Chemical mapping of a 177-nucleotide RNA with 2A3 and DMS. For 2A3 the reverse transcriptase was SuperScript II with manganese. Values cover nucleotides 27 to 126. DMS adducts were read by reverse transcription with MarathonRT. Reactivities are rounded to 0.1 and cut off at 0 and 3. The reactions ran in a buffer of 150 mM KOAc, 10 mM MgCl2 and 150 mM bicine (pH 8.5), at 24 C.
[RMDB]
RNA sequence: GGGAACGACUCGAGUAGAGUCGAAAAGUUGAUGUGCGGCCACGCGCUCUUCACUGCUGGCGAGGAGGCGCGCGGCUCAAUUGCCGCCGUCGCUGGGGCUCGCGGCACGGUCGGCGUGCCCGUGGAGAGGUAGUACUAUGUUCGCAUAGUACUACCUAAAAGAAACAACAACAACAAC
Reactivity to 2A3 in 0.01 (KOAc 150mM, MgCl2 10mM, bicine 150mM(pH8.5), 24C), signal-to-noise 6, nucleotides 027 to 126: g060u070u080g050a110u110g080u080g040c040g010g000c010c010a030c010g030c000g020c020u030c000u050u040c030a070c090u090g050c050u110g170g020c070g020a040g020g030a040g030g030c000g000c030g000c010g000g010c010u020c030a010a080u110u140g000c000c000g030c030c020g030u090c050g000c040u060g010g030g100g110c010u020c030g020c000g010g000c000a010c040g060g020u190c080g030g020c010g000u040g020c010c010c010g040u100g030g050a200g000
Reactivity to DMS in 0.01 (KOAc 150mM, MgCl2 10mM, bicine 150mM(pH8.5), 24C), signal-to-noise 5, nucleotides 027 to 126: g000u000u000g000a050u000g020u000g010c050g000g010c070c070a060c020g010c060g000c020u020c020u000u000c020a100c040u010g020c070u020g000g030c060g010a040g000g010a180g000g010c010g030c060g010c060g010g020c010u000c170a070a110u010u020g000c000c000g000c040c060g010u020c090g000c030u010g000g010g000g020c030u010c020g020c020g010g000c010a020c130g000g000u010c040g000g000c020g010u010g000c110c020c030g030u000g010g020a110g000